[RMDB]
RNA sequence: GGGAACGACUCGAGUAGAGUCGAAAAUCCUAAGUCCUUUUGACGCUAGAAGAACAAGUUCGAGGAUCAUUCUCGGAAACGAGAAUGGGAGAACCUUGACGGUAUAGCGAUAAGGAUAUGGAAAAGAAACGUGGCCAGUUCGCUGGCCACGUUUCAACCCUAGAAACAACUUCGGUUGUUUCUAGGGAAAAGAAACAACAACAACAAC
Reactivity to 2A3 in 0.01 (KOAc 150mM, MgCl2 10mM, bicine 150mM(pH8.5), 24C), signal-to-noise 1, nucleotides 027 to 156: u030c010c000u000a090a040g060u010c000c000u010u010u100u140g190a130c010g020c000u030a040g030a200a000g020a300a130c070a050a020g000u050u030c050g000a240g020g010a020u040c000a000u000u000c000u010c010g040g040a150a050a080c020g010a000g000a000a000u000g010g000g000a040g000a030a030c040c040u060u010g020a020c010g040g000u130a020u000a100g000c010g010a020u010a070a000g040g000a010u040a100u200g050g020a090a060a120a170g040a150a000a000c000g020u000g000g010c000c020a050g040u130u090c300g150c150u010g010g020c000c000a000c000g010u000u000u000c000a000a000

Structure probing data (2A3) for a 207-nucleotide construct. The RNA was probed in 150 mM KOAc, 10 mM MgCl2 and 150 mM bicine (pH 8.5) at 24 C.